[RMDB]
RNA sequence: GGGAACGACUCGAGUAGAGUCGAAAAUUCGUUUUGCAGGUUGAUGUUUGUUAUCAGCACUGAACGAAAAUAAAGCAGUAACCCGCAAUGUGUGCGAAUUAUUGGCAAAAGGCAACCACAGGCUGCCUUGAAAACAUUGCUUCGGCAAUGUUUUCAAAAAAGAAACAACAACAACAAC
Reactivity to 2A3 in 0.01 (KOAc 150mM, MgCl2 10mM, bicine 150mM(pH8.5), 24C), signal-to-noise 4, nucleotides 027 to 126: u020u000c010g010u020u010u070u100g010c070a010g000g030u000u000g020a050u010g090u090u280u090g220u050u200a060u030c000a020g020c070a060c130u030g030a080a010c020g090a020a000a000a060u200a000a110a010g040c030a000g020u060a030a050c010c010c010g000c030a070a120u120g040u030g040u070g100c020g030a030a040u130u130a080u160u080g090g000c010a080a100a020a040g060g000c000a020a030c030c000a170c040a190g040g000c000u000g000c000c000
Reactivity to DMS in 0.01 (KOAc 150mM, MgCl2 10mM, bicine 150mM(pH8.5), 24C), signal-to-noise 4, nucleotides 027 to 126: u010u000c000g000u000u000u020u020g040c080a090g020g010u000u000g000a030u000g000u050u020u010g010u050u010a040u010c010a080g010c070a120c150u020g000a060a070c070g000a060a040a040a070u020a050a070a080g020c040a050g000u000a030a050c040c020c060g000c030a050a050u020g000u000g020u000g000c010g010a040a050u010u020a060u020u010g000g000c110a070a030a090a050g000g000c000a020a040c040c020a170c140a120g010g040c040u000g010c010c020